[RMDB]
The record gives the reactivity of an RNA of 177 nucleotides to 2A3.
Values cover nucleotides 27 to 126.
For 2A3 the reverse transcriptase was SuperScript II with manganese.
RNA sequence: GGGAACGACUCGAGUAGAGUCGAAAAGCAAGUGGUUAUACUGGUCAGCAUCAAAUUGAUUAUGUUGAGUUAUCGUAUUUUGGUGGUUUUGGUUAUAGGGAUUUGAGGAAGGUAGCUAAUCCAGAUGCCCGCACUCAAGAUUCGUCUUGAGUGCGGGAAAAGAAACAACAACAACAAC
Reactivity to 2A3 in 0.01 (KOAc 150mM, MgCl2 10mM, bicine 150mM(pH8.5), 24C), signal-to-noise 1, nucleotides 027 to 126: g010c040a130a060g000u050g010g000u090u220a080u090a000c000u000g030g220u130c000a000g180c010a030u080c000a060a000a260u160u130g140a000u010u300a090u050g050u000u020g000a000g100u030u130a260u190c100g000u000a140u040u100u080u020g010g000u000g000g000u000u000u050u150g000g000u120u000a180u100a100g040g070g070a040u000u120u160g040a060g000g000a050a050g040g000u010a000g030c060u000a090a000u000c000c000a040g000a000u060g050